[RMDB]
The record gives the reactivity of an RNA of 177 nucleotides to 2A3 and DMS. Reactivities are rounded to 0.1 and cut off at 0 and 3.
RNA sequence: GGGAACGACUCGAGUAGAGUCGAAAAUUAUUGUCGUUUUAGUGUUGAGUGCUUGCGGAAAAAGCAGUAAUAAAGAUGAAGGAGUAAAAGAUGCUACUAAAACGGAAACCUCAAAACAUAAAGGUGGGAAUUUAAGGGGUUUCGACCCCUUAAAUUCAAAAGAAACAACAACAACAAC
Reactivity to 2A3 in 0.01 (KOAc 150mM, MgCl2 10mM, bicine 150mM(pH8.5), 24C), signal-to-noise 2, nucleotides 027 to 126: u240u100a010u300u000g120u110c080g020u150u000u000u000a030g000u000g010u040u040g100a060g060u060g000c000u150u020g040c070g150g110a010a020a020a020a010g000c010a010g030u070a000a100u070a020a110a000g090a050u180g100a040a110g010g080a130g090u050a020a020a010a020g040a060u060g000c000u010a000c000u000a000a020a020a000c010g030g020a080a090a000c000c010u080c000a130a180a010a210c020a040u210a120a100a030g000g000u070g090g170
Reactivity to DMS in 0.01 (KOAc 150mM, MgCl2 10mM, bicine 150mM(pH8.5), 24C), signal-to-noise 2, nucleotides 027 to 126: u000u000a180u040u040g020u000c000g030u010u000u000u000a020g020u010g020u000u020g040a130g020u000g000c100u000u020g010c080g020g000a060a010a060a080a090g000c050a040g020u010a020a060u010a030a000a110g000a100u010g000a130a100g000g040a090g000u080a060a040a050a200g000a080u030g000c050u000a010c000u030a000a040a010a050c040g010g020a060a030a100c030c030u000c070a010a040a040a150c150a040u040a040a020a030g000g010u000g020g000
Source information:
The 2A3 profile rests on 1,155 reads. DMS adducts were read by reverse transcription with MarathonRT. The reactions ran in a buffer of 150 mM KOAc, 10 mM MgCl2 and 150 mM bicine (pH 8.5), at 24 C.